[RMDB]
RNA sequence: GGGAACGACUCGAGUAGAGUCGAAAAAGAGUUACUCAUCUUGCUCCAAACAGGACACUAGUGUGAUAACUAUCAACACAGGGCUGUCACUACACCAAAAAAGUGUUGUAAGCGCAACCUUUAAGCCGUUCAUGUAAAGAUUCGUCUUUACAUGAACAAAAGAAACAACAACAACAAC
Reactivity to DMS in 0.01 (KOAc 150mM, MgCl2 10mM, bicine 150mM(pH8.5), 24C), signal-to-noise 9, nucleotides 027 to 126: a040g000a060g010u010u010a030c060u020c050a070u010c020u000u010g000c110u010c010c020a080a140a130c150a090g000g000a070c030a050c060u000a050g020u000g020u000g010a060u010a100a100c130u040a090u000c050a060a040c030a030c050a100g000g000g000c070u000g000u020c030a080c050u010a050c100a100c050c060a000a060a070a060a070a060g000u020g000u000u000g010u010a050a100g010c150g000c020a030a030c040c020u000u000u010a070a110g010c160c140
Reactivity to 2A3 in 0.01 (KOAc 150mM, MgCl2 10mM, bicine 150mM(pH8.5), 24C), signal-to-noise 9, nucleotides 027 to 126: a000g120a010g020u040u040a040c020u010c030a070u020c030u040u050g030c030u010c010c000a070a150a140c060a090g020g040a020c030a030c090u090a050g040u010g010u010g110a030u030a100a060c080u070a060u180c050a070a070c040a010c020a090g020g030g010c040u050g030u090c020a010c050u080a020c030a030c020c040a070a060a040a030a020a040g090u110g010u060u030g030u050a100a060g040c040g000c100a020a050c010c000u040u090u090a080a020g090c060c040
Annotation:
Chemical mapping of a 177-nucleotide RNA with DMS and 2A3. The RNA was probed in 150 mM KOAc, 10 mM MgCl2 and 150 mM bicine (pH 8.5) at 24 C. For 2A3, 32,522 sequencing reads were counted. It was measured as part of the RMDB library OK1LIB.